Chemical mapping of a 177-nucleotide RNA with DMS and 2A3. The RNA was probed in 150 mM KOAc, 10 mM MgCl2 and 150 mM bicine (pH 8.5) at 24 C. Source: RMDB library OK2TST, as collected in RNAgym. For DMS, 1,693 sequencing reads were counted. Values cover nucleotides 27 to 126.
[RMDB]
RNA sequence: GGGAACGACUCGAGUAGAGUCGAAAAGGCGCGGCGGGCGGUGCCGAGGGCGUGAGCUACUCGCACAGCGGCAACCCACAGAACGACAACGAGAAAUGGGACGCGCUGUCUGCUGACCCGGCGGGCAGACCAAGGUCAAAUUCGUUUGACCUUGGUCAAAAGAAACAACAACAACAAC
Reactivity to DMS in 0.01 (KOAc 150mM, MgCl2 10mM, bicine 150mM(pH8.5), 24C), signal-to-noise 3, nucleotides 027 to 126: g040g010c000g010c000g030g020c020g000g000g060c010g020g040u000g020c220c020g050a040g000g000g020c000g000u030g000a200g000c020u010a070c000u000c010g040c150a040c020a060g010c000g000g000c050a090a280c020c000c000a040c110a050g000a170a140c040g020a070c300a160a090c060g000a100g000a160a190a090u000g000g000g010a300c290g000c030g000c030u000g010u000c110u000g000c020u000g020a150c020c020c010g010g000c030g000g000g010c070a050
Reactivity to 2A3 in 0.01 (KOAc 150mM, MgCl2 10mM, bicine 150mM(pH8.5), 24C), signal-to-noise 3, nucleotides 027 to 126: g080g000c030g000c010g120g050c010g000g120g010c030g020g060u040g060c090c050g010a010g000g040g000c020g030u090g020a050g040c030u300a300c010u150c010g000c000a010c010a010g020c020g120g000c020a040a070c010c020c000a020c040a010g140a120a030c050g160a050c120a250a040c100g050a050g060a100a140a010u050g000g010g010a030c020g000c010g000c030u000g010u010c030u060g030c000u010g130a300c010c000c010g020g050c030g000g070g000c010a050